[RMDB]
RNA sequence: GGGAACGACUCGAGUAGAGUCGAAAAAGCGCGAAAGAAACCGGGAAAGCGCGAAACCGGGAAAGUCAGGAAGAUGGAAACUACGUUACAUCGAAAGAAAGUAGGAAACUGACGAAGAAAGAAAGAAGGGUUAACAAUAGUUCGCUAUUGUUAACCCAAAAGAAACAACAACAACAAC
Reactivity to DMS in 0.01 (KOAc 150mM, MgCl2 10mM, bicine 150mM(pH8.5), 24C), signal-to-noise 3, nucleotides 027 to 126: a130g000c020g030c000g020a090a070a050g020a110a170a110c010c020g010g000g000a090a090a150g000c060g050c040g000a030a110a120c000c000g020g050g000a140a060a110g000u000c000a000g010g000a150a140g010a050u030g000g000a110a110a090c000u040a040c100g010u060u040a190c200a040u000c030g000a190a090a090g000a070a070a130g020u000a010g000g000a110a050a230c000u010g000a000c000g000a130a110g040a020a040a080g000a120a150a050g010a040a200
Reactivity to 2A3 in 0.01 (KOAc 150mM, MgCl2 10mM, bicine 150mM(pH8.5), 24C), signal-to-noise 1, nucleotides 027 to 126: a000g020c020g000c000g000a010a050a090g040a010a080a010c030c040g060g080g010a060a110a090g010c000g020c000g000a040a000a000c000c000g000g000g000a130a120a000g010u000c000a000g020g090a260a040g090a080u090g010g150a100a100a000c000u010a000c000g000u060u000a090c070a160u100c040g020a000a020a100g150a060a100a000g050u090a080g030g020a030a030a030c000u000g020a000c070g000a090a000g090a070a060a010g000a020a140a050g030a040a060